[RMDB]
RNA sequence: GGGAACGACUCGAGUAGAGUCGAAAAUGUGCUGUUAUCAAGACAUCAACGCGUCAAACAGUGUUUUUGCCCAUUAUCGGGUUGGUCCCGCACAACCAGCUUGCGCCUGGAGACUUGAUUGGUGUCAACAAGGAUUCUUAUUUGGUUCUCGACAAGCCAAAUCUGUCUAGUUCGCUAGACAGAUUUGAAAAGAAACAACAACAACAAC
Reactivity to DMS in 0.01 (KOAc 150mM, MgCl2 10mM, bicine 150mM(pH8.5), 24C), signal-to-noise 3, nucleotides 027 to 156: u000g030u000g040c020u000g020u010u000a160u010c090a100a120g010a090c040a100u010c070a110a140c140g030c120g000u000c070a160a040a090c060a060g040u000g020u000u000u020u000u010g020c040c030c010a190u000u010a120u010c050g020g020g030u000u000g000g010u000c010c000c030g020c090a080c090a090a060c040c020a080g020c060u000u000g010c080g000c070c030u000g030g020a170g000a100c050u000u010g010a150u000u010g030g020u000g010u000c030a080a160c060a070a100g020g010a140u000u000c020u010u000a070u020u010u010g020g010u000u000c000u000c020g020a110c040a020a110g010c090
Reactivity to 2A3 in 0.01 (KOAc 150mM, MgCl2 10mM, bicine 150mM(pH8.5), 24C), signal-to-noise 8, nucleotides 027 to 156: u160g040u070g020c020u010g020u100u040a120u240c150a210a090g020a030c010a020u150c070a080a130c120g060c070g100u030c030a040a090a020c020a020g000u010g070u060u010u000u050u080g030c040c020c000a030u160u150a090u100c030g000g010g000u000u010g020g030u030c020c010c000g010c010a050c020a020a070c030c030a010g020c010u040u080g030c040g040c030c030u020g030g010a040g020a040c010u080u090g070a130u140u080g060g030u090g090u140c020a010a050c030a040a040g070g010a070u080u030c010u080u130a190u100u140u130g040g000u110u050c080u040c040g090a080c030a030a020g050c020
Source: RMDB library OK3TST, as collected in RNAgym. This 207-nucleotide RNA was probed chemically with DMS and 2A3. Reactivities are given for positions 27 through 156. For 2A3 the reverse transcriptase was SuperScript II with manganese. For DMS the reverse transcriptase was MarathonRT.